This 177-nucleotide RNA was probed chemically with 2A3 and DMS. Values are in units of 0.01, from 0 to 300, in steps of 10. For 2A3 the reverse transcriptase was SuperScript II with manganese. DMS adducts were read by reverse transcription with MarathonRT. The data come from the RNA Mapping Database (RMDB), library OK1LIB.

[RMDB]
RNA sequence: GGGAACGACUCGAGUAGAGUCGAAAAGCGACGAUGCACAGCGAAGCGAUGAGGAGGAGCGGCGCCUAUGACUCGGUCGGACACGCUGGCAACCAAGCUGCCAUGGUCCGAUUGGCUUCCGCGGCAAACUAAUGCCCGUCUUCGGACGGGCAUUAGUAAAAGAAACAACAACAACAAC
Reactivity to 2A3 in 0.01 (KOAc 150mM, MgCl2 10mM, bicine 150mM(pH8.5), 24C), signal-to-noise 2, nucleotides 027 to 126: g080c030g060a050c030g020a030u120g000c030a020c010a120g070c050g050a040a000g000c000g060a080u080g060a090g010g020a030g010g010a020g000c040g010g000c010g050c020c010u230a250u290g000a030c000u000c040g000g020u020c020g000g030a060c060a040c270g100c080u020g000g000c000a000a070c030c100a150a030g030c080u040g000c000c000a060u080g010g010u030c000c000g000a020u000u060g070g000c000u070u030c050c020g060c000g000g000c050a090a100
Reactivity to DMS in 0.01 (KOAc 150mM, MgCl2 10mM, bicine 150mM(pH8.5), 24C), signal-to-noise 1, nucleotides 027 to 126: g000c050g030a070c030g010a050u000g000c070a020c000a100g030c000g020a070a100g000c030g000a020u030g000a150g000g000a040g030g000a080g000c000g010g000c300g000c060c000u000a050u010g000a100c010u000c010g000g000u010c000g080g000a000c000a040c160g000c230u010g000g100c060a060a060c060c120a030a030g000c020u010g030c020c000a030u010g000g000u000c000c010g000a020u040u000g000g050c050u010u000c040c050g030c010g000g020c100a120a100